[RMDB]
RNA sequence: GGGAACGACUCGAGUAGAGUCGAAAACGAGCAAGACAUUGUCUUCGGCACCAUGCAACAUCUGGUCAUAGCAUGUUGUCAAUGUGAGAUGCUUUGAAGCCGUGUUCUGGAAAGAGAGAUAGACUGACGUGUACGCGACAUUCGUGUCGCGUACACGAAAAGAAACAACAACAACAAC
Reactivity to DMS in 0.01 (KOAc 150mM, MgCl2 10mM, bicine 150mM(pH8.5), 24C), signal-to-noise 1, nucleotides 027 to 126: c050g010a110g010c070a170a100g010a050c030a030u000u000g000u010c010u000u000c070g010g000c040a030c030c000a060u000g000c010a040a020c090a040u000c030u000g020g000u000c190a090u030a070g000c140a000u010g000u000u000g000u000c070a130a060u010g020u010g010a040g020a120u000g000c050u000u010u010g000a030a070g020c040c190g000u000g010u010u000c010u000g000g000a060a080a040g010a120g000a020g000a090u000a030g000a080c070u000g000a200
Reactivity to 2A3 in 0.01 (KOAc 150mM, MgCl2 10mM, bicine 150mM(pH8.5), 24C), signal-to-noise 2, nucleotides 027 to 126: c050g000a010g110c050a050a030g010a000c010a040u090u140g110u000c010u030u020c010g000g000c040a010c040c030a050u040g010c010a030a010c000a010u010c020u070g080g080u180c070a050u120a090g050c070a000u010g000u000u000g060u050c010a150a020u170g040u100g050a050g010a130u040g010c040u100u140u300g030a020a000g000c000c000g050u020g070u110u050c030u000g070g030a070a080a000g090a000g010a010g000a010u050a070g090a010c070u060g030a010